Structure probing data (2A3 and DMS) for a 177-nucleotide construct. The data come from the RNA Mapping Database (RMDB), library OK2TST. Reactivities are given for positions 27 through 126. Conditions: 150 mM KOAc, 10 mM MgCl2 and 150 mM bicine (pH 8.5), 24 C. For DMS the reverse transcriptase was MarathonRT.
[RMDB]
RNA sequence: GGGAACGACUCGAGUAGAGUCGAAAAUACCAUUUGGCCAUAGUCUGCCUGAAGCAUGGUGUGGGGUGCAAGCUGUAGCAACUUUGAUUGCAUAACCUGACUCUUGGGUUAUCCUCAGAAUGGACUAGAGAUAGGGAGGGUUCGCCCUCCCUAUCUCAAAAGAAACAACAACAACAAC
Reactivity to 2A3 in 0.01 (KOAc 150mM, MgCl2 10mM, bicine 150mM(pH8.5), 24C), signal-to-noise 1, nucleotides 027 to 126: u080a000c010c010a040u080u020u070g040g010c030c000a090u100a060g040u010c040u000g120c000c030u030g000a100a000g020c040a050u050g030g010u060g020u050g040g050g000g000u030g030c000a000a040g040c030u040g040u150a000g020c030a000a030c030u180u120u190g160a230u060u060g030c010a020u010a010a000c010c000u040g020a070c020u110c050u150u120g020g000g000u020u070a020u020c000c000u030c050a020g140a060a070u100g010g050a060c070u070a210
Reactivity to DMS in 0.01 (KOAc 150mM, MgCl2 10mM, bicine 150mM(pH8.5), 24C), signal-to-noise 1, nucleotides 027 to 126: u000a240c000c010a080u010u000u000g000g020c050c040a090u000a080g000u000c080u000g000c070c030u000g000a090a050g000c090a060u000g010g000u000g010u000g010g010g000g020u010g020c000a010a050g030c050u000g050u060a060g010c070a020a060c060u000u030u000g000a150u000u000g000c080a050u010a020a090c060c030u000g000a090c230u020c060u000u010g020g000g000u010u010a060u000c030c020u000c090a070g020a060a040u000g000g000a030c180u000a050